[RMDB]
RNA sequence: GGGAACGACUCGAGUAGAGUCGAAAACCUCGCGCCUCUUCUUCGAUUCGGAUCGGCUCAUCUCGACAAGAGGCGGCGGUCCUCAGUGCUCUUACUCUUUUCUGUAAAGAGGAGACUGCUGGACCCGCCGCCCAAGUUCGAGCAUGAGCCAAAUGCCCUACUGAGAAGAGUUCGCUCUUCUCAGUAGAAAAGAAACAACAACAACAAC
Reactivity to 2A3 in 0.01 (KOAc 150mM, MgCl2 10mM, bicine 150mM(pH8.5), 24C), signal-to-noise 3, nucleotides 027 to 156: c010c020u030c040g080c010g010c010c010u000c000u040u010c000u040u040c020g040a060u100u090c050g050g050a130u090c110g020g000c000u000c000a000u010c000u000c000g000a010c030a090a120g090a140g070g000c000g000g000c000g000g000u000c000c010u010c010a050g000u140g250c040u030c020u120u220a300c010u050c020u050u130u150u110c140u300g240u300a040a020a000g000a000g000g000a000g010a000c000u010g080c060u010g000g000a010c000c100c020g000c000c000g010c000c000c010a030a020g030u090u030c000g000a000g010c040a010u000g000a000g000c010c000a020a040a010u030g000c010c000
An RNA of 207 nucleotides, treated with 2A3 and read out base by base. Values are in units of 0.01, from 0 to 300, in steps of 10. The reactions ran in a buffer of 150 mM KOAc, 10 mM MgCl2 and 150 mM bicine (pH 8.5), at 24 C. For 2A3, 2,308 sequencing reads were counted.